[RMDB]
RNA sequence: GGGAACGACUCGAGUAGAGUCGAAAAGCAGCACAACAUGGUAUAAAGGCAAUUAUCCAACCGGGUGGUUCGAUUAAAGAUCAAGAUUCAAUUGAUAUGGCUAAUAAACAUGGUAUUGCAAUGGUAGGACUAGAAGGGCAUUCGUGCCCUUCUAGUCAAAAGAAACAACAACAACAAC
Reactivity to DMS in 0.01 (KOAc 150mM, MgCl2 10mM, bicine 150mM(pH8.5), 24C), signal-to-noise 2, nucleotides 027 to 126: g030c040a040g010c040a050c050a060a160c050a010u000g000g040u000a050u020a090a070a190g000g030c080a020a070u000u000a080u000c040c070a060a040c090c070g010g000g010u020g000g000u000u000c210g020a060u000u020a030a080a090g010a030u000c020a040a020g000a130u010u000c240a040a070u000u000g000a030u000a050u000g030g010c050u000a030a100u010a060a040a050c100a020u000g000g000u010a020u000u000g010c030a070a050u020g010g000u020a030g000
Reactivity to 2A3 in 0.01 (KOAc 150mM, MgCl2 10mM, bicine 150mM(pH8.5), 24C), signal-to-noise 1, nucleotides 027 to 126: g030c030a010g010c000a030c010a080a080c000a000u020g000g070u180a040u050a190a050a060g010g020c000a020a080u060u010a020u110c010c000a010a040c000c040g060g060g140u170g020g000u080u040c020g010a050u050u150a120a110a030g050a070u020c010a040a020g090a280u270u000c110a100a080u090u040g020a020u040a080u150g030g000c020u050a070a000u020a060a110a020c020a030u010g040g000u090a060u070u080g000c040a010a060u060g050g070u080a080g040